[RMDB]
The record gives the reactivity of an RNA of 177 nucleotides to 2A3 and DMS. For DMS, 2,348 sequencing reads were counted. The RNA was probed in 150 mM KOAc, 10 mM MgCl2 and 150 mM bicine (pH 8.5) at 24 C. Source: RMDB library M2PK90, as collected in RNAgym. For DMS the reverse transcriptase was MarathonRT. 2A3 adducts were read by reverse transcription with SuperScript II with manganese.
RNA sequence: GGGAACGACUCGAGUAGAGUCGAAAAUAACAGCAGAGUAGAUGAUUCGCGUUAAGUGUGUGUGAAUGGGAUGUCGUCACACAACGAAGCGAGAGCGCGGUGAAUCAUUGCAUCCGCUCCAAAACAACAAGCUUUUUAGUUUCGACUAAAAAGCUUGAAAAGAAACAACAACAACAAC
Reactivity to 2A3 in 0.01 (KOAc 150mM, MgCl2 10mM, bicine 150mM(pH8.5), 24C), signal-to-noise 2, nucleotides 027 to 126: u080a010a040c040a000g050c000a010g000a010g020u080a010g020a040u020g000a010u040u000c010g000c020g030u020u060a120a050g040u060g000u000g000u000g000u010g180a090a100u090g060g010g090a050u100g110u230c050g010u000c020a000c000a010c010a020a040c000g010a070a010g010c020g020a020g020a000g030c010g010c020g050g000u020g030a010a010u010c010a010u000u080g000c020a040u010c010c010g000c000u000c010c020a040a130a050a060c040a030a010
Reactivity to DMS in 0.01 (KOAc 150mM, MgCl2 10mM, bicine 150mM(pH8.5), 24C), signal-to-noise 3, nucleotides 027 to 126: u030a100a130c240a070g000c030a050g000a050g010u010a200g000a030u000g000a040u000u000c010g000c000g020u000u020a060a150g010u010g010u000g020u000g010u000g000a030a040u000g010g010g010a130u000g030u000c040g010u000c010a000c010a000c000a030a000c050g010a110a110g040c070g000a160g000a120g010c010g010c060g010g010u000g000a020a030u000c040a020u000u000g000c100a160u000c010c020g010c010u000c030c060a090a070a040a090c210a050a160